[RMDB]
RNA sequence: GGGAACGACUCGAGUAGAGUCGAAAAUAAUUCUAGAGCUUAUACAUGCAAUUAAAACAUAAACCUUAUGGGACAUGUGCUUUUAUUAGGCUAAAACCAAGUGAUCGCAAGAUCGUUAUAUUGGUUGUAUCUCUGUAGUUUUCGAACUACAGAGAUAAAAAGAAACAACAACAACAAC
Reactivity to 2A3 in 0.01 (KOAc 150mM, MgCl2 10mM, bicine 150mM(pH8.5), 24C), signal-to-noise 8, nucleotides 027 to 126: u060a000a070u080u020c060u110a050g010a000g100c010u060u070a030u040a100c030a020u070g020c020a040a200u150u170a150a110a070a020c020a040u090a060a170a060c040c010u200u180a060u230g010g010g050a020c020a060u070g030u030g040c030u040u050u040u080a060u060u090a030g020g010c040u060a110a040a000a070c000c000a040a030g030u020g070a000u000c000g000c050a040a010g010a020u020c000g020u090u040a140u030a050u150u030g020g010u000u030g020
Reactivity to DMS in 0.01 (KOAc 150mM, MgCl2 10mM, bicine 150mM(pH8.5), 24C), signal-to-noise 9, nucleotides 027 to 126: u020a080a120u020u010c050u010a120g010a060g000c010u000u000a030u010a090c130a030u010g000c030a130a100u030u040a050a080a120a150c040a030u010a040a110a210c070c040u010u020a080u020g010g010g000a200c190a020u000g010u010g010c050u000u010u000u000a070u020u000a030g010g000c020u000a060a070a040a030c000c000a000a020g010u010g000a000u000c000g010c300a070a110g000a000u000c000g000u000u020a050u020a110u000u000g010g000u000u010g010